[RMDB]
RNA sequence: GGGAACGACUCGAGUAGAGUCGAAAAGAUAUGGAUCAUAGGGAGAAUUCACAUCGGAAACGAUGUGGAUUCUUUGAUCUAUAUCCUAAGUCAAACAGAAUUCUACACUUCGGUGUAGAAUUCUGAAGCUUAUGUUCCUGUUCGCAGGAACAUAAGCAAAAGAAACAACAACAACAAC
Reactivity to 2A3 in 0.01 (KOAc 150mM, MgCl2 10mM, bicine 150mM(pH8.5), 24C), signal-to-noise 2, nucleotides 027 to 126: g020a030u010a000u000g010g000a000u010c040a040u210a290g300g150g040a050g030a000a010u020u020c000a000c030a020u020c010g030g020a210a090a060c000g000a000u020g020u020g000g000a000u060u000c000u000u010u000g000a000u000c000u000a000u000a000u010c000c000u070a090a080g120u140c030a070a060a140c010a060g020a010a000u010u000c000u030a000c010a020c020u100u180c300g180g000u000g010u000a020g010a000a000u010u000c000u000g000a010a010
Reactivity to DMS in 0.01 (KOAc 150mM, MgCl2 10mM, bicine 150mM(pH8.5), 24C), signal-to-noise 2, nucleotides 027 to 126: g000a030u010a010u000g000g000a030u000c000a170u010a150g000g050g010a020g000a010a010u010u000c000a010c000a000u000c000g020g010a080a150a220c000g000a000u000g010u000g000g000a010u000u000c000u000u000u000g000a000u000c000u000a000u000a000u000c010c040u000a030a130g010u000c090a080a150a300c020a000g000a010a000u000u000c000u000a010c000a000c000u000u000c160g020g010u000g000u000a010g000a010a000u000u000c000u000g000a040a090
An RNA of 177 nucleotides, treated with 2A3 and DMS and read out base by base. DMS adducts were read by reverse transcription with MarathonRT. The data come from the RNA Mapping Database (RMDB), library TTRDEL.